Description:
Chemical mapping of a 177-nucleotide RNA with 2A3. It was measured as part of the RMDB library OK1LIB. The reactions ran in a buffer of 150 mM KOAc, 10 mM MgCl2 and 150 mM bicine (pH 8.5), at 24 C. Reactivities are rounded to 0.1 and cut off at 0 and 3.
RNA sequence: GGGAACGACUCGAGUAGAGUCGAAAAUGGCCGUCCUCGGCACCGGCCAGCUCGGUGAGCUCCAGCAGGUCGAUCCGGCGACCAUCCAUCUGUACGACGGUGGCGCGCCAGCGUACCGAUUGAUCGGGGAUUAAUGGCCCUUCGGGGCCAUUAAUCCAAAAGAAACAACAACAACAAC
Reactivity to 2A3 in 0.01 (KOAc 150mM, MgCl2 10mM, bicine 150mM(pH8.5), 24C), signal-to-noise 1, nucleotides 027 to 126: u080g030g030c010c010g090u200c010c000u120c030g000g060c010a010c000c010g000g010c030c070a010g020c030u020c030g140g030u150g000a070g040c070u150c010c000a110g090c000a070g000g020u000c010g070a040u010c000c040g000g060c040g050a010c000c010a000u000c000c000a030u010c000u040g200u050a040c080g010a060c050g100g050u010g040g300c090g070c050g000c110c000a010g000c000g040u120a010c080c040g000a000u000u070g060a150u070c020g000g000